[RMDB]
RNA sequence: GGGAACGACUCGAGUAGAGUCGAAAAGAUAUGGAGGCAGCAACAGCCCAGGGUCGGAAACGACCCAUGGGACAUGCUGCUCCUAAGUCAAAAGUGAGAGGGUGGUGUUCGCACCACCCUCUCACAACUUAUCAAUCGACUUCGGUCGAUUGAUAAGAAAAGAAACAACAACAACAAC
Reactivity to DMS in 0.01 (KOAc 150mM, MgCl2 10mM, bicine 150mM(pH8.5), 24C), signal-to-noise 1, nucleotides 027 to 126: g000a050u000a300u000g010g000a030g010g020c010a000g020c000a040a090c230a150g000c000c010c020a030g000g010g000u030c000g000g020a060a040a140c000g000a010c000c000c000a000u000g020g000g030a030c020a140u000g000c020u000g020c000u010c010c010u000a060a160g030u010c060a040a130a170a160g020u000g000a020g020a010g020g010g080u000g010g040u000g020u010u010c160g000c020a000c000c000a010c010c000c000u010c010u000c010a000c000a050a100